RNA sequence: GGGAACGACUCGAGUAGAGUCGAAAAGGCUCCUCCAUUGAGCCACACGGAGACAGGGUCAAGGGGGAAUUAGUUUAAGUUCUCUCUUUAUUGGUGGCUGCCACGCGAAGCAACAGCAGUCGGGGGAACGACUCAUGGUAUUCGUACCAUGAGUCGUAAAAGAAACAACAACAACAAC
Reactivity to 2A3 in 0.01 (KOAc 150mM, MgCl2 10mM, bicine 150mM(pH8.5), 24C), signal-to-noise 5, nucleotides 027 to 126: g030g000c010u020c020c020u080c060c030a150u060u240g040a010g000c000c030a020c000a000c030g080g000a080g010a060c050a060g020g030g040u030c050a020a010g000g020g010g000g020a000a010u050u070a070g250u080u100u220a150a020g000u020u000c010u000c000u000c000u000u060u120a160u090u160g080g000u050g020g000c010u010g010c010c030a100c050g060c020g080a110a040g020c020a020a040c040a070g010c010a010g040u070c030g000g000g000g020g020a060
Reactivity to DMS in 0.01 (KOAc 150mM, MgCl2 10mM, bicine 150mM(pH8.5), 24C), signal-to-noise 3, nucleotides 027 to 126: g000g000c010u000c000c070u020c120c070a160u020u010g000a030g010c000c010a080c160a090c080g000g000a130g000a120c160a080g000g000g020u020c050a030a030g010g000g000g000g010a010a030u020u040a120g030u000u040u010a110a090g010u000u000c000u010c000u000c020u000u000u060a080u040u000g030g020u010g010g020c060u000g030c040c070a110c290g000c040g000a080a160g000c050a050a130c220a130g040c030a050g030u020c030g000g000g000g000g000a120
Structure probing data (2A3 and DMS) for a 177-nucleotide construct.
For 2A3, 3,518 sequencing reads were counted.
Values cover nucleotides 27 to 126.